[RMDB]
RNA sequence: GGGAACGACUCGAGUAGAGUCGAAAAAUUCAUCUCAAAUUGCUAUAUUUAUUAUAAUGGCUUAACCCAGCUGAGGUAUUCUCCUUAUGGGGAAACAGUCCCUGAUCUUUGUGACUGUCAUGUGGCAGUCAUGCACUCUUUUCGAAGAGUGCAUGACAAAAGAAACAACAACAACAAC
Reactivity to DMS in 0.01 (KOAc 150mM, MgCl2 10mM, bicine 150mM(pH8.5), 24C), signal-to-noise 1, nucleotides 027 to 126: a000u020u000c070a070u000c000u010c010a080a050a140u010u000g010c010u010a020u010a060u020u010u000a170u080u010a160u000a090a040u010g000g010c010u000u000a060a100c060c030c030a150g010c110u010g020a030g010g010u010a060u010u000c040u000c020c000u010u010a100u000g030g000g000g000a040a040a000c090a050g020u000c010c030c040u000g000a110u010c180u000u010u000g010u000g000a020c010u000g010u000c060a120u000g000u010g000g030c030a060
Reactivity to 2A3 in 0.01 (KOAc 150mM, MgCl2 10mM, bicine 150mM(pH8.5), 24C), signal-to-noise 1, nucleotides 027 to 126: a040u080u010c000a010u000c000u000c030a170a150a240u110u100g000c000u000a050u030a130u300u300u060a250u300u120a060u150a260a050u100g030g010c000u070u080a070a070c020c000c010a060g070c030u040g000a010g150g000u100a200u130u000c010u040c090c030u100u210a080u220g000g000g000g000a000a000a050c010a010g060u010c000c000c010u030g080a130u080c140u220u130u080g040u030g040a030c000u000g040u060c050a190u170g000u100g030g030c030a050
Source: RMDB library OK2TST, as collected in RNAgym. Chemical mapping of a 177-nucleotide RNA with DMS and 2A3. The DMS profile rests on 848 reads. High DMS reactivity at an A or C suggests that its Watson-Crick edge is free. For DMS the reverse transcriptase was MarathonRT.